[RMDB]
RNA sequence: GGGAACGACUCGAGUAGAGUCGAAAACUUGAGAACUCACUGCUGCUUGGACCAUACAACCGUCUCAAAGUCCCUGAGACUGAGCGUACUGCCUACGACAACCAAGCACAGGGGCUGCGUGAGCAUACCAAUUAACCCCAUUCGUGGGGUUAAUUGGAAAAGAAACAACAACAACAAC
Reactivity to 2A3 in 0.01 (KOAc 150mM, MgCl2 10mM, bicine 150mM(pH8.5), 24C), signal-to-noise 3, nucleotides 027 to 126: c030u090u110g050a060g030a180a040c010u010c030a060c050u100g040c010u010g020c010u020u020g010g020a140c070c030a050u060a130c060a080a070c020c060g010u040c020u000c020a080a100a010g060u020c010c020c040u030g020a020g020a040c030u080g060a050g090c020g010u050a060c080u170g060c010c030u060a040c010g040a020c010a040a030c040c000a000a000g000c000a010c030a020g010g000g010g010c020u070g000c020g020u050g010a020g000c010a040u070a110
Reactivity to DMS in 0.01 (KOAc 150mM, MgCl2 10mM, bicine 150mM(pH8.5), 24C), signal-to-noise 3, nucleotides 027 to 126: c070u010u010g010a150g010a110a180c030u000c020a060c060u000g030c130u010g010c010u000u000g000g000a180c090c080a130u000a050c100a060a140c130c110g010u010c000u000c010a030a070a070g010u000c020c020c030u030g020a050g000a060c020u010g000a070g010c150g000u000a030c140u020g020c070c090u000a080c060g000a060c120a070a170c050c030a020a040g000c040a090c080a020g000g010g010g000c000u000g000c050g000u000g010a060g010c090a080u000a140
The data come from the RNA Mapping Database (RMDB), library OK2TST. Structure probing data (2A3 and DMS) for a 177-nucleotide construct. DMS adducts were read by reverse transcription with MarathonRT. Values cover nucleotides 27 to 126. The reactions ran in a buffer of 150 mM KOAc, 10 mM MgCl2 and 150 mM bicine (pH 8.5), at 24 C.